[RMDB]
RNA sequence: GGGAACGACUCGAGUAGAGUCGAAAACGCCUUCACGUGUAUUCCACGCUUUCUGAAAGUUUACCUCACAAAUGCAUCGCUUAAAUAUCUCAUAGUCACAAGAUGCAUAUAACGCAGAGAUAUUAAACGGUACGGUGGAUUUCGAUCCACCGUACCGAAAAGAAACAACAACAACAAC
Reactivity to 2A3 in 0.01 (KOAc 150mM, MgCl2 10mM, bicine 150mM(pH8.5), 24C), signal-to-noise 2, nucleotides 027 to 126: c020g000c000c040u030u150c110a050c080g020u020g000u170a090u060u060c020c000a000c010g040c000u000u030u000c060u200g120a080a000a000g000u020u000u120a060c000c000u040c020a030c020a020a100a030u000g000c000a000u010c000g000c120u300u170a010a040a000u000a000u000c020u000c020a140u160a210g000u080c010a050c000a090a120g000a020u050g000c000a020u060a000u020a080a000c000g000c040a000g000a000g000a010u000a080u040u110a140a120a040
Conditions: 150 mM KOAc, 10 mM MgCl2 and 150 mM bicine (pH 8.5), 24 C.
Structure probing data (2A3) for a 177-nucleotide construct.
Values are in units of 0.01, from 0 to 300, in steps of 10.
The 2A3 profile rests on 703 reads.
The data come from the RNA Mapping Database (RMDB), library OK1LIB.
2A3 adducts were read by reverse transcription with SuperScript II with manganese.